[RMDB]
Structure probing data (2A3) for a 207-nucleotide construct.
RNA sequence: GGGAACGACUCGAGUAGAGUCGAAAAUGAGACAACCACGCUUCACAAUGUGCGGCAAAGAAACAUUGUUUAUGCAAAGGCACUUCGCAAUGUGUGCUCAAACAUUGCUUAUUCAAACACGCUUCACAAAAGAAUCAGUGGUUCGCCACUGAUUCAACCUCAGCGAAUCGUUCGCGAUUCGCUGAGGAAAAGAAACAACAACAACAAC
Reactivity to 2A3 in 0.01 (KOAc 150mM, MgCl2 10mM, bicine 150mM(pH8.5), 24C), signal-to-noise 2, nucleotides 027 to 156: u300g000a090g010a030c060a030a000c040c010a010c000g000c010u020u000c000a010c000a010a000u000g000u020g010c010g020g040c080a090a030a070g030a030a060a000c020a010u010u010g160u080u020u140a080u090g050c070a030a040a070g230g000c000a000c010u020u030c010g030c050a020a030u030g010u010g030u000g050c180u100c200a090a110a000c030a000u000u000g030c000u150u090a160u110u150c090a040a150a050c110a000c140g140c030u130u160c080a090c060a150a000a020a070g010a000a000u020c020a020g000u010g020g000u060u050c130g050c030c000a000c000u000g000a000u000u000c000a000a000
The data come from the RNA Mapping Database (RMDB), library M2RFPK.